Notes
Source: RMDB library OK2TRN, as collected in RNAgym. An RNA of 177 nucleotides, treated with DMS and 2A3 and read out base by base. The reactions ran in a buffer of 150 mM KOAc, 10 mM MgCl2 and 150 mM bicine (pH 8.5), at 24 C.
RNA sequence: GGGAACGACUCGAGUAGAGUCGAAAAGAACAUUGAUGUUUUUGACUGGUGGUGUCCAGGUAGAUGUGGGUGUUCUACCUUAUCAAAUUGGAAAUCAUCCUGCAAGGAUCUAAAUGAGGUUAAUCCACAGAAGCAGAAAGUUCGCUUUCUGCUUCUGAAAAGAAACAACAACAACAAC
Reactivity to DMS in 0.01 (KOAc 150mM, MgCl2 10mM, bicine 150mM(pH8.5), 24C), signal-to-noise 4, nucleotides 027 to 126: g000a100a090c030a040u010u010g000a090u000g010u000u000u000u000u000g010a140c050u000g000g030u000g000g000u000g000u010c010c030a010g010g010u000a110g010a030u000g010u010g010g000g020u000g010u010u010c100u020a020c010c000u010u000a060u010c080a010a100a200u010u000g000g000a030a030a060u000c060a030u000c020c020u000g010c090a060a060g010g010a020u000c090u000a070a060a050u010g010a100g010g010u000u010a080a110u000c020c040a180
Reactivity to 2A3 in 0.01 (KOAc 150mM, MgCl2 10mM, bicine 150mM(pH8.5), 24C), signal-to-noise 2, nucleotides 027 to 126: g020a060a010c020a010u020u110g050a040u070g120u070u030u010u060u050g130a120c030u020g000g030u020g000g020u040g050u000c010c030a040g030g020u040a050g020a030u050g070u130g180g040g000u030g070u150u000c070u070a010c000c000u010u020a040u040c030a100a140a080u070u050g040g020a050a060a050u050c010a020u030c000c000u000g040c020a030a070g000g020a010u020c010u070a040a090a080u040g020a030g000g050u060u040a050a030u050c000c000a040